[RMDB]
RNA sequence: GGGAACGACUCGAGUAGAGUCGAAAAACGGAGCCGUACGCGGCUCCGAAGUCAGAUGAUUUGAAUUGAUAAGCUGAUGUUCUGUGAGGUACAAAAGUUAAUAGCAUGUUAGAGUUCUGAUGGCAAAUUUCUUUAACCUAUUCGUAGGUUAAAGAAAAAAAGAAACAACAACAACAAC
Reactivity to 2A3 in 0.01 (KOAc 150mM, MgCl2 10mM, bicine 150mM(pH8.5), 24C), signal-to-noise 8, nucleotides 027 to 126: a010c020g000g010a010g000c000c000g020u030a030c270g010c010g090g000c000u010c000c000g000a010a000g010u010c020a010g010a080u060g060a080u060u090u110g150a150a110u110u050g030a040u080a190a030g000c010u020g010a040u010g040u060u040c010u030g080u090g090a060g060g040u030a030c030a010a050a010a010g010u050u050a110a070u070a150g050c030a020u050g040u090u140a050g010a030g050u050u000c020u040g040a040u030g030g030c030a030a080a110
Reactivity to DMS in 0.01 (KOAc 150mM, MgCl2 10mM, bicine 150mM(pH8.5), 24C), signal-to-noise 6, nucleotides 027 to 126: a150c020g010g020a020g030c000c010g050u020a070c210g040c020g020g010c000u000c000c000g000a010a030g010u000c020a020g000a080u020g010a080u010u020u020g010a110a100u020u010g010a080u000a060a170g000c010u000g000a130u010g000u000u010c030u000g000u020g000a070g010g010u000a010c060a030a060a110a040g000u000u010a060a090u030a070g010c040a020u010g010u010u010a100g010a140g000u010u000c020u000g000a070u010g000g000c090a070a070a120
This 177-nucleotide RNA was probed chemically with 2A3 and DMS. In probing experiments dimethyl sulfate is read out at A N1 and C N3, which are open when not base-paired. The RNA was probed in 150 mM KOAc, 10 mM MgCl2 and 150 mM bicine (pH 8.5) at 24 C. Source: RMDB libraries RFM100 and RFMREP, as collected in RNAgym.